[RMDB]
RNA sequence: GGGAACGACUCGAGUAGAGUCGAAAACGAGUAUUCGCGUUAUAUCGUAGACGGGGCGGCGGUUGCUGAAAUGAAAGGAAUCAUUGAACGCCAUCAGGCCAAAUGAUUUUUACCGUUGCAUCAUGUCCUGUGCUUAGAGGUUCGCCUCUAAGCACAGAAAAGAAACAACAACAACAAC
Reactivity to DMS in 0.01 (KOAc 150mM, MgCl2 10mM, bicine 150mM(pH8.5), 24C), signal-to-noise 3, nucleotides 027 to 126: c050g000a100g050u010a080u000u000c090g020c110g000u010u000a090u030a130u000c090g000u020a130g000a020c030g000g020g000g000c030g030g000c050g000g000u000u020g000c080u020g010a140a050a070u000g000a070a170a240g010g020a010a020u000c000a000u000u000g000a090a150c230g000c000c000a160u040c300a130g000g020c000c040a070a020a000u000g000a000u020u000u020u010u040a030c070c000g010u000u000g000c030a050u020c010a110u020g010u000c030
Reactivity to 2A3 in 0.01 (KOAc 150mM, MgCl2 10mM, bicine 150mM(pH8.5), 24C), signal-to-noise 2, nucleotides 027 to 126: c030g000a040g100u180a090u160u230c090g030c050g050u050u130a240u040a040u220c060g010u040a020g000a010c000g000g000g020g000c000g000g010c000g010g030u040u110g010c070u140g000a080a070a030u220g010a040a030a000g090g020a010a010u000c000a000u010u000g030a130a040c060g000c020c000a090u180c040a090g000g000c010c000a000a030a010u030g000a020u020u000u020u110u030a010c030c030g010u010u020g030c020a080u030c050a070u090g030u010c010

Record summary
This 177-nucleotide RNA was probed chemically with DMS and 2A3. For 2A3, 1,285 sequencing reads were counted.